[RMDB]
RNA sequence: GGGAACGACUCGAGUAGAGUCGAAAAAAUAGCGGGUCAAGGUACAACGCAGAGAGAUACGCUCAUCCCAAGUUCUCUUCGGAGUACCAAGACUUCGGUACAGAAGAGAUACCGACUCUUCAUAGAAGAGUAAUUCUACUUUCGAGUAGAAUUACUCAAAAGAAACAACAACAACAAC
Reactivity to 2A3 in 0.01 (KOAc 150mM, MgCl2 10mM, bicine 150mM(pH8.5), 24C), signal-to-noise 5, nucleotides 027 to 126: a000a010u160a040g040c030g000g030g000u010c020a020a030g000g010u030a010c010a040a000c030g000c050a010g000a000g000a000g000a040u080a200c090g010c050u040c030a130u040c030c010c000a000a010g040u040u000c000u000c000u010u020c010g010g000a010g000u000a000c000c010a010a020g010a010c000u100u090c030g010g010u090a060c050a070g020a010a000g010a010g010a030u070a070c000c000g070a050c010u000c000u030u050c020a040u110a100g180a210a010
Reactivity to DMS in 0.01 (KOAc 150mM, MgCl2 10mM, bicine 150mM(pH8.5), 24C), signal-to-noise 6, nucleotides 027 to 126: a070a050u000a050g010c020g000g000g010u000c010a040a300g000g010u000a000c020a040a240c030g030c130a030g000a020g010a050g010a130u010a050c150g000c040u010c140a110u010c050c050c020a120a120g000u000u010c000u000c000u000u000c000g010g000a300g000u000a000c000c010a020a300g000a020c030u000u010c030g010g000u010a050c150a170g000a020a000g000a010g010a060u000a110c020c030g010a150c020u000c000u010u000c010a150u010a130g010a090a100